An RNA of 170 nucleotides, treated with DMS and 2A3 and read out base by base. For 2A3 the reverse transcriptase was SuperScript II with manganese.

RNA sequence: GGGAACGACUCGAGUAGAGUCGAAAACAAACCAUAUGCUACAAGGAUAGUGUGUUUUAUGUUGUAAAGAAUAGUACAGCUUUUCCAUUUGAAACACUUUCAGCAUGUCGUGCGUAUUUGGAUUCACAGCGUUAAACCUUCGGGUUUAACAAAAGAAACAACAACAACAAC
Reactivity to DMS in 0.01 (KOAc 150mM, MgCl2 10mM, bicine 150mM(pH8.5), 24C), signal-to-noise 9, nucleotides 027 to 129: c100a080a140a070c040c120a090u000a040u000g020c060u000a110c120a100a100g020g010a020u000a060g000u000g000u010g020u040u010u020u030a060u000g040u040u030g030u040a010a020a030g000a080a110u020a070g030u060a070c150a070g000c000u000u000u000u000c040c000a080u020u020u030g000a080a060a030c040a040c080u000u040u010c060a070g020c000a000u020g030u020c090g030u050g030c200g000u000a070u010u030u030g010g010a140u040u030c030a000c140a080g000c180
Reactivity to 2A3 in 0.01 (KOAc 150mM, MgCl2 10mM, bicine 150mM(pH8.5), 24C), signal-to-noise 9, nucleotides 027 to 129: c030a010a050a010c010c010a020u030a020u100g020c020u060a050c040a150a090g150g020a080u070a100g090u050g020u000g060u040u010u020u050a110u060g070u080u020g040u050a030a050a030g050a070a090u120a130g130u140a070c050a040g030c000u040u020u010u010c030c010a050u070u040u140g070a030a020a000c020a000c000u010u060u070c030a040g020c000a040u040g020u080c040g020u030g040c030g010u030a090u040u080u080g070g010a060u080u070c070a050c050a100g100c060
Values cover nucleotides 27 to 129. The RNA was probed in 150 mM KOAc, 10 mM MgCl2 and 150 mM bicine (pH 8.5) at 24 C.